This 177-nucleotide RNA was probed chemically with DMS and 2A3. Conditions: 150 mM KOAc, 10 mM MgCl2 and 150 mM bicine (pH 8.5), 24 C.

[RMDB]
RNA sequence: GGGAACGACUCGAGUAGAGUCGAAAAAACGGUAUGGAUAUGGAACUCGGGGACAUGCUUUGAGGGUCGGAAACGACCCAAGAUGAGAGCAACAGCUCUCUAGCGUGGUUCCUAAGUCGGAAUUGAACUUCAUCAAUAACUUCGGUUAUUGAUGAAGAAAAGAAACAACAACAACAAC
Reactivity to DMS in 0.01 (KOAc 150mM, MgCl2 10mM, bicine 150mM(pH8.5), 24C), signal-to-noise 5, nucleotides 027 to 126: a050a060c080g000g020u010a070u000g010g000a110u000a080u000g010g000a110a030c000u000c060g000g000g010g010a120c020a020u000g010c020u000u010u000g010a300g010g000g020u000c000g000g010a070a080a190c000g000a010c000c000c000a000a030g000a100u000g010a000g000a010g010c000a090a130c300a190g000c000u000c000u000c000u000a010g000c000g020u000g000g010u000u000c000c000u010a030a040g000u010c040g020g000a110a070u010u000g000a090a150
Reactivity to 2A3 in 0.01 (KOAc 150mM, MgCl2 10mM, bicine 150mM(pH8.5), 24C), signal-to-noise 5, nucleotides 027 to 126: a000a000c160g020g030u240a180u200g100g030a110u070a100u300g090g010a080a030c010u030c100g010g000g010g010a010c010a020u040g000c000u130u070u130g140a140g000g010g000u010c000g020g010a070a060a020c020g000a000c000c020c010a010a000g020a010u080g010a000g000a000g000c010a030a300c030a250g010c010u000c000u000c010u020a000g010c010g030u060g030g140u110u010c000c010u000a030a010g050u020c050g070g070a120a140u120u180g020a100a070